Conditions: 150 mM KOAc, 10 mM MgCl2 and 150 mM bicine (pH 8.5), 24 C. The record gives the reactivity of an RNA of 177 nucleotides to 2A3 and DMS. DMS adducts were read by reverse transcription with MarathonRT. For DMS, 15,871 sequencing reads were counted.
[RMDB]
RNA sequence: GGGAACGACUCGAGUAGAGUCGAAAACGAAGGAUUUUACAAAGAUGGUUAGAGACAUGGUUAUAGAGAACAAACUUGGGAAAUGGCCAACACUCAUGGAUGUCGCCACGGCGUGUCAUCUAUUAACUACUUAGCUUAUGUUCGCAUAAGCUAAGUAAAAAGAAACAACAACAACAAC
Reactivity to 2A3 in 0.01 (KOAc 150mM, MgCl2 10mM, bicine 150mM(pH8.5), 24C), signal-to-noise 9, nucleotides 027 to 126: c060g040a070a050g140g020a050u070u100u120u200a100c100a030a100a020g080a060u140g030g050u070u070a030g010a010g000a050c010a060u020g030g010u030u050a070u050a110g090a010g050a140a010c080a080a090a040c060u070u070g040g020g040a020a130a120u110g080g000c020c010a040a030c060a030c060u050c020a030u030g010g030a030u050g030u040c010g000c040c010a080c070g050g000c030g000u020g030u020c020a030u000c030u030a090u050u110a060a050c040
Reactivity to DMS in 0.01 (KOAc 150mM, MgCl2 10mM, bicine 150mM(pH8.5), 24C), signal-to-noise 6, nucleotides 027 to 126: c050g000a090a100g020g000a080u010u000u010u030a060c100a050a080a100g010a110u000g010g000u000u010a040g010a060g020a030c050a040u010g000g010u000u010a110u030a060g000a080g020a080a070c150a060a050a090c090u010u000g000g000g010a040a070a080u010g020g010c020c060a030a080c160a070c040u010c060a050u010g000g020a090u010g000u000c040g000c070c020a080c150g010g010c050g030u010g000u010c060a040u010c030u010a030u030u020a050a050c160